Structure probing data (2A3 and DMS) for a 177-nucleotide construct. Source: RMDB library M2PK50, as collected in RNAgym. For DMS the reverse transcriptase was MarathonRT. The RNA was probed in 150 mM KOAc, 10 mM MgCl2 and 150 mM bicine (pH 8.5) at 24 C.

RNA sequence: GGGAACGACUCGAGUAGAGUCGAAAAGAUCUAUCCUUCGGGAUAGAUCAAACUAUAGCCCGGGCAAAACGGGAACGCACCCGAAAACCCGGCCAUAUGCGAAAACUCGCCACUUCGGUGGCGAGAACCCUAUUUAGUUGUUCGCAACUAAAUAGGGAAAAGAAACAACAACAACAAC
Reactivity to 2A3 in 0.01 (KOAc 150mM, MgCl2 10mM, bicine 150mM(pH8.5), 24C), signal-to-noise 2, nucleotides 027 to 126: g000a000u010c000u000a010u020c000c040u030u080c280g090g000g000a000u010a000g000a000u000c000a000a000a000c000u010a020u110a110g020c000c020c050g000g010g000c070a070a060a030a040c000g000g030g010a070a070c110g040c070a100c010c000c010g040a060a040a020a050c000c000c020g030g000c000c020a220u270a060u090g080c050g050a030a040a080a110c000u010c000g000c030c010a020c030u070u080c200g130g000u070g120g000c000g000a000g000a000a000
Reactivity to DMS in 0.01 (KOAc 150mM, MgCl2 10mM, bicine 150mM(pH8.5), 24C), signal-to-noise 1, nucleotides 027 to 126: g010a000u000c020u010a000u000c000c000u000u010c190g030g000g010a000u000a010g000a000u000c000a050a090a090c090u010a030u000a100g020c210c010c020g000g000g040c070a040a070a170a190c010g000g020g010a110a070c280g010c250a020c010c010c000g020a040a100a300a190c020c000c010g000g030c010c070a050u010a020u020g030c090g000a040a050a070a130c000u000c000g000c000c000a010c010u010u000c130g000g010u010g010g000c000g000a000g010a020a070